[RMDB]
RNA sequence: GGGAACGACUCGAGUAGAGUCGAAAAACACCAGGCCCCGGCCUCCUGCCCCAGGCUGGGGCUGACUAUGCAGGACACCCCACCCCCACCAGCCUUGGGGUCUCCGAUGCUAAGGUAGGGGCUUUGCACCAAUUCUUCUCUUCGGAGAAGAAUUGGUAAAAGAAACAACAACAACAAC
Reactivity to DMS in 0.01 (KOAc 150mM, MgCl2 10mM, bicine 150mM(pH8.5), 24C), signal-to-noise 2, nucleotides 027 to 126: a090c070a110c070c040a230g020g020c000c000c020c000g020g020c010c000u000c050c050u000g000c000c010c010c090a110g000g020c030u000g010g000g020g010c000u000g020a020c090u020a110u000g040c050a180g020g000a090c160a040c020c000c000c000a100c080c000c010c010c120a130c260c130a070g020c080c060u000u000g030g000g010g020u000c160u000c050c010g000a130u010g000c020u000a050a090g010g000u000a070g020g020g010g010c040u000u000u010g000c240

Structure probing data (DMS) for a 177-nucleotide construct.
It was measured as part of the RMDB library OK2TST.
For DMS, 1,146 sequencing reads were counted.
Conditions: 150 mM KOAc, 10 mM MgCl2 and 150 mM bicine (pH 8.5), 24 C.